The record gives the reactivity of an RNA of 177 nucleotides to DMS. Conditions: 150 mM KOAc, 10 mM MgCl2 and 150 mM bicine (pH 8.5), 24 C.
RNA sequence: GGGAACGACUCGAGUAGAGUCGAAAAUUAAAAGAGUUGUUUGCCCAGGCUGAUUUCGAGGUCCUGGCCUCAAGCAAUCCUCCUACCUCGACCUCCCAAAGUACUGGGAUUACAGAUGUGAGCCACCGCAACCUAAAAGGUUCGCCUUUUAGGUUGCAAAAGAAACAACAACAACAAC
Reactivity to DMS in 0.01 (KOAc 150mM, MgCl2 10mM, bicine 150mM(pH8.5), 24C), signal-to-noise 1, nucleotides 027 to 126: u030u000a110a080a080a110g000a050g020u000u000g000u010u000u000g000c230c000c020a070g030g010c050u000g000a140u000u000u000c140g020a210g020g010u000c030c050u000g020g010c050c120u000c080a050a050g000c050a080a090u000c040c010u000c020c000u000a040c040c010u000c000g020a100c090c120u000c000c000c010a020a090a090g010u000a030c060u000g020g000g000a060u000u000a080c100a070g010a040u000g000u000g000a060g010c020c050a030c140c070